[RMDB]
RNA sequence: GGGAACGACUCGAGUAGAGUCGAAAAGUGCCGCUGAUCAUGGUGCGGCUUAGAAGUAAGCCCGACCAGGUUUUCAUGGAACCGUAAGGAAGGACGCUACAAGAAUCCCCGCUUUUCUAUGCCGUGGAGGUAACUCAAAGUUCGCUUUGAGUUACCUAAAAGAAACAACAACAACAAC
Reactivity to DMS in 0.01 (KOAc 150mM, MgCl2 10mM, bicine 150mM(pH8.5), 24C), signal-to-noise 5, nucleotides 027 to 126: g020u020g000c040c000g020c040u000g020a090u010c070a110u010g000g050u010g030c120g020g000c000u000u010a000g010a090a100g000u000a040a200g010c030c000c010g010a220c020c020a170g020g000u000u000u010u020c130a070u030g020g000a050a050c010c020g000u010a070a120g000g020a090a200g000g010a040c070g000c070u000a010c110a100a100g000a050a100u010c040c010c010c110g000c080u010u010u020u000c030u010a040u020g000c020c010g010u000g010g000
Reactivity to 2A3 in 0.01 (KOAc 150mM, MgCl2 10mM, bicine 150mM(pH8.5), 24C), signal-to-noise 6, nucleotides 027 to 126: g120u090g020c000c010g010c040u040g050a110u070c020a070u100g060g010u080g030c020g010g000c000u020u010a070g000a080a010g040u080a030a050g010c000c000c010g000a010c000c010a010g020g010u010u010u040u170c160a140u180g110g020a020a010c000c000g050u100a060a070g020g030a030a020g040g010a030c090g010c020u070a030c040a040a040g050a070a060u050c010c000c000c000g000c020u060u090u040u000c030u060a070u090g040c000c000g020u020g040g050
Overview:
Structure probing data (DMS and 2A3) for a 177-nucleotide construct. Reactivities are given for positions 27 through 126. The reactions ran in a buffer of 150 mM KOAc, 10 mM MgCl2 and 150 mM bicine (pH 8.5), at 24 C. For 2A3 the reverse transcriptase was SuperScript II with manganese. Source: RMDB libraries RFM100 and RFMREP, as collected in RNAgym.